Structure probing data (DMS and 2A3) for a 177-nucleotide construct. Source: RMDB library RFMREP, as collected in RNAgym. The RNA was probed in 150 mM KOAc, 10 mM MgCl2 and 150 mM bicine (pH 8.5) at 24 C. For DMS the reverse transcriptase was MarathonRT. The DMS profile rests on 7,323 reads.
RNA sequence: GGGAACGACUCGAGUAGAGUCGAAAACUUCCACUUGUGCAGGCUCAGCAUCCCUGGGGCCUCAACUCCUUAUCCAUCCUGGGCUGCUCCUCGCAGUAAGCCCUCUCCUUGGGGUCCUGGCCCUCUAGUCAUAUACUAUGUUCGCAUAGUAUAUGACAAAAGAAACAACAACAACAAC
Reactivity to DMS in 0.01 (KOAc 150mM, MgCl2 10mM, bicine 150mM(pH8.5), 24C), signal-to-noise 5, nucleotides 027 to 126: c220u010u000c020c010a120c170u010u000g020u000g020c080a060g010g000c040u000c050a080g010c100a070u000c060c030c020u000g000g000g000g020c040c010u000c080a040a090c060u010c020c020u010u000a070u000c070c060a080u010c080c060u000g000g010g030c010u000g000c010u000c040c180u010c190g020c120a020g010u010a060a080g000c020c010c010u000c060u000c050c050u000u010g010g000g010g010u000c040c040u000g010g000c030c020c020u000c090u010a140
Reactivity to 2A3 in 0.01 (KOAc 150mM, MgCl2 10mM, bicine 150mM(pH8.5), 24C), signal-to-noise 4, nucleotides 027 to 126: c020u080u030c010c000a070c060u090u130g060u070g080c050a030g050g000c020u020c060a030g000c000a080u070c020c000c000u030g010g000g010g020c010c000u020c010a020a030c010u060c020c010u120u100a070u090c040c030a050u040c010c060u030g020g010g000c010u020g000c000u020c030c030u060c090g010c040a010g000u040a130a040g000c000c000c010u010c010u010c000c030u020u050g030g000g000g010u020c010c030u030g040g000c020c000c000u030c020u030a020